Chemical mapping of a 207-nucleotide RNA with 2A3. The RNA was probed in 150 mM KOAc, 10 mM MgCl2 and 150 mM bicine (pH 8.5) at 24 C. It was measured as part of the RMDB library OK3TST.
RNA sequence: GGGAACGACUCGAGUAGAGUCGAAAAUGCUGAUGAGCUGUGUUCAUCCAGCCACAGAACUCACAAGAAUCUCAUUUCAACACUCAAGAUGUUCAGCUAUGUUCAACAGCCUGUCGCUGGCAAAGCUAAUGGUUACUGGCAAAUGUAGAUUCAUUAACAUGAUGGACGUGUUCGCACGUCCAUCAUGAAAAGAAACAACAACAACAAC
Reactivity to 2A3 in 0.01 (KOAc 150mM, MgCl2 10mM, bicine 150mM(pH8.5), 24C), signal-to-noise 2, nucleotides 027 to 156: u110g020c000u030g000a220u020g000a190g060c000u010g000u010g020u070u050c020a030u040c050c000a010g000c000c000a000c000a000g110a140a020c050u110c110a070c030a050a130g020a030a060u030c010u010c020a030u020u040u050c030a060a050c040a040c080u140c050a040a000g040a030u040g040u040u090c000a000g000c000u000a010u180g030u150u190c060a100a080c000a040g030c000c070u250g120u190c060g000c020u050g020g030c050a040a120a000g000c010u090a160a210u130g070g000u060u110a050c070u120g000g010c000a000a000a030u030g010u050a040g000a010u060u020c000a030u080u200a030a130